[RMDB]
RNA sequence: GGGAACGACUCGAGUAGAGUCGAAAAUGAGGCUGGGAUCUACUGCGUAGCGGACCAGCUCAUGUUGACGGAACGUCCGCACUAAGCUUGCCAUCAAUAUGGGUGCCAUGGAGGAGUCCGUGGCAUUCAGGUUGGCUAAGGAGGGAUGAACCGGGCCCCCUAGUUCCAUGUUCGCAUGGAACUAGGGAAAAGAAACAACAACAACAAC
Reactivity to 2A3 in 0.01 (KOAc 150mM, MgCl2 10mM, bicine 150mM(pH8.5), 24C), signal-to-noise 1, nucleotides 027 to 156: u040g000a020g300g000c000u020g010g010g010a050u010c020u040a050c010u180g270c200g180u120a010g000c040g010g050a070c000c010a010g010c000u000c000a000u070g090u130u110g020a030c000g000g000a010a000c000g010u010c000c010g000c050a030c030u040a100a000g110c010u050u060g050c000c030a060u020c060a070a270u130a170u130g010g010g020u000g000c000c010a000u010g010g000a040g070g090a150g170u000c000c000g020u000g000g040c000a000u000u000c020a000g000g000u020u000g040g000c030u030a010a060g010g020a000g060g040g000a010u060g000a020a010c000c000g090g090g080c000c000